RNA sequence: GGGAACGACUCGAGUAGAGUCGAAAAGAUUAUCAUAUUAAGAUGGAGAAAUUGCGCAUUUGCUAAGAUCUCCAGCCAAUCGCUUUGGAGUUCGGCGAGGCUUAGCCGUGGAGUUCCAUCAGCAUUCCACUCUCAGAUAUUUCGAUAUCUGAGAGUGAAAAGAAACAACAACAACAAC
Reactivity to 2A3 in 0.01 (KOAc 150mM, MgCl2 10mM, bicine 150mM(pH8.5), 24C), signal-to-noise 7, nucleotides 027 to 126: g020a020u180u230a100u260c040a020u080a130u300u210a140a070g030a040u020g010g010a020g010a020a070a090u060u030g000c040g000c100a160u110u100u250g000c020u040a030a010g010a160u040c010u000c010c010a000g000c000c010a030a090u080c070g010c130u170u130u150g050g050a030g000u100u070c070g060g000c010g010a020g040g000c010u020u060a010g010c010c020g000u020g030g010a030g010u030u000c000c000a010u010c020a010g030c010a040u100u030c030
Reactivity to DMS in 0.01 (KOAc 150mM, MgCl2 10mM, bicine 150mM(pH8.5), 24C), signal-to-noise 8, nucleotides 027 to 126: g000a130u000u010a100u010c070a090u010a120u010u010a090a150g000a050u010g000g010a050g010a030a060a180u000u000g010c040g010c250a150u010u010u000g010c010u010a040a040g000a160u000c010u000c010c080a090g020c020c040a060a070u000c130g000c140u000u000u010g010g000a080g010u000u000c110g020g020c040g020a050g010g010c030u000u000a040g000c040c100g010u000g000g000a050g010u000u000c000c010a030u000c050a110g010c150a110u010u010c060